[RMDB]
RNA sequence: GGGAACGACUCGAGUAGAGUCGAAAAGAAAGAAAGAAAGAAGCCGGCUCUGCUAUUUUCACGGCAACCACGUUGAAAUUACAACGAAAGAAGCUCGCACUCAACUUCAACGGCUUAACGAGUGCAAAAAAGAAGUAUCACUUCGGUGAUACUUCAACUAUUAGCAGAUGUUCGCAUCUGCUAAUAGAAAAGAAACAACAACAACAAC
Reactivity to 2A3 in 0.01 (KOAc 150mM, MgCl2 10mM, bicine 150mM(pH8.5), 24C), signal-to-noise 1, nucleotides 027 to 156: g060a040a070a000g070a090a120a010g000a040a220a030g060a070a040g010c110c060g040g000c040u060c000u040g090c050u070a090u140u070u050u060c080a010c010g020g000c060a060a110c020c020a030c020g000u000u000g070a140a100a100u200u130a150c040a040a000c010g050a050a000a150g000a030a000g020c110u160c120g040c040a010c000u020c010a100a050c010u020u000c050a060a050c010g010g000c020u030u030a020a050c030g000a020g000u000g010c030a030a030a030a030a030a020g010a000a010g000u000a000u000c000a000c010u020u040c190g020g020u000g020a000u000a000c000u000u000c000a000a000

Structure probing data (2A3) for a 207-nucleotide construct. The RNA was probed in 150 mM KOAc, 10 mM MgCl2 and 150 mM bicine (pH 8.5) at 24 C. For 2A3, 573 sequencing reads were counted.